[RMDB]
Chemical mapping of a 177-nucleotide RNA with DMS and 2A3. The reactions ran in a buffer of 150 mM KOAc, 10 mM MgCl2 and 150 mM bicine (pH 8.5), at 24 C. The 2A3 profile rests on 4,415 reads.

RNA sequence: GGGAACGACUCGAGUAGAGUCGAAAAGAUAUGGAACCUGACUGGGAGAAGUGUCGGAAACGACCUUCGAGGAUCAGUAGGUUCCUAAGUCAAAAGAACUUAGAUACGUUCGCGUAUCUAAGUUCAAGAGACACGAUUAGUUCGCUAAUCGUGUCUCAAAAGAAACAACAACAACAAC
Reactivity to DMS in 0.01 (KOAc 150mM, MgCl2 10mM, bicine 150mM(pH8.5), 24C), signal-to-noise 2, nucleotides 027 to 126: g010a030u010a300u010g000g000a050a000c000c000u000g000a040c010u000g030g000g000a050g000a010a020g000u040g000u000c010g020g000a070a080a250c000g000a010c010c000u000u000c000g010a120g010g010a040u010c010a030g010u000a040g000g000u000u000c000c010u000a020a060g010u000c030a100a020a140a150g000a000a000c010u000u010a000g000a020u000a000c000g010u000u010c230g020c030g020u000a000u000c010u000a000a000g000u000u000c010a070a070
Reactivity to 2A3 in 0.01 (KOAc 150mM, MgCl2 10mM, bicine 150mM(pH8.5), 24C), signal-to-noise 2, nucleotides 027 to 126: g020a020u080a040u130g000g010a020a010c010c010u060g300a170c010u000g060g040g020a050g000a000a010g060u080g000u300c000g010g020a050a120a040c010g020a000c000c010u000u000c000g030a140g000g020a030u010c000a000g000u010a000g010g000u000u020c000c000u000a010a010g040u010c010a010a000a060a190g010a000a000c000u000u010a000g000a000u000a010c000g010u030u080c300g000c020g160u020a000u000c000u000a000a000g000u000u000c000a000a000